The record gives the reactivity of an RNA of 177 nucleotides to DMS and 2A3. The RNA was probed in 150 mM KOAc, 10 mM MgCl2 and 150 mM bicine (pH 8.5) at 24 C. For 2A3 the reverse transcriptase was SuperScript II with manganese. The data come from the RNA Mapping Database (RMDB), library OK2TST. The DMS profile rests on 543 reads.
RNA sequence: GGGAACGACUCGAGUAGAGUCGAAAAUUGAUUGAUGCCCUCGCAGCUCAGGAGGCUGUGCCAAUCACCGACGAUGCAAAUGUACCUUUUGAAACAGACUCGGCUCAAUCCAUAUCACCAGAGCGAAGCCGCAUAGGCAAUUCGUUGCCUAUGCGGCAAAAGAAACAACAACAACAAC
Reactivity to DMS in 0.01 (KOAc 150mM, MgCl2 10mM, bicine 150mM(pH8.5), 24C), signal-to-noise 1, nucleotides 027 to 126: u010u010g000a030u000u000g000a050u000g020c070c020c010u000c020g030c040a070g010c020u010c080a170g040g040a110g010g000c030u020g000u000g000c160c010a070a060u000c050a120c090c080g010a080c090g000a230u000g010c030a040a080a090u000g020u020a060c050c030u010u000u010u030g010a080a090a070c130a190g000a090c100u000c090g070g010c170u000c000a090a040u000c020c000a010u000a030u000c030a060c070c000a140g000a090g040c110g000a170a090
Reactivity to 2A3 in 0.01 (KOAc 150mM, MgCl2 10mM, bicine 150mM(pH8.5), 24C), signal-to-noise 1, nucleotides 027 to 126: u070u090g010a000u020u050g020a030u100g000c000c000c000u000c030g070c040a020g020c000u020c050a090g020g160a040g000g130c060u000g030u070g030c000c040a010a090u030c040a020c030c060g010a040c050g020a010u120g030c060a060a060a030u070g060u120a080c010c000u140u040u040u160g180a160a150a030c040a000g070a020c040u000c020g000g000c010u000c010a010a000u000c000c010a030u050a010u110c060a080c020c010a000g060a010g060c050g040a100a020